The record gives the reactivity of an RNA of 177 nucleotides to DMS. The data come from the RNA Mapping Database (RMDB), library OK2TRN.
RNA sequence: GGGAACGACUCGAGUAGAGUCGAAAAUGCACAUGCCAUGAUGAUGCUGAUCCCGGAAGCAUGGUCGGGCAACAAGCUGAUGUCGGAUGAGCGCCGCGCGUUCUACGAAUAUCAUGCAGCACUCAUAUGCGUGAUGCACGUUCGCGUGCAUCACGCAAAAAGAAACAACAACAACAAC
Reactivity to DMS in 0.01 (KOAc 150mM, MgCl2 10mM, bicine 150mM(pH8.5), 24C), signal-to-noise 1, nucleotides 027 to 126: u000g010c090a070c170a190u010g080c000c040a010u000g000a050u000g030a140u020g040c000u000g000a170u000c000c000c000g050g000a300a130g000c010a000u000g010g030u020c060g000g000g000c050a050a080c200a170a170g010c020u000g020a000u020g000u000c010g010g000a140u020g000a050g000c020g000c020c300g080c300g000c050g000u000u000c000u000a250c020g000a020a020u000a030u000c000a030u000g010c000a110g030c090a070c070u050c040a150u020a120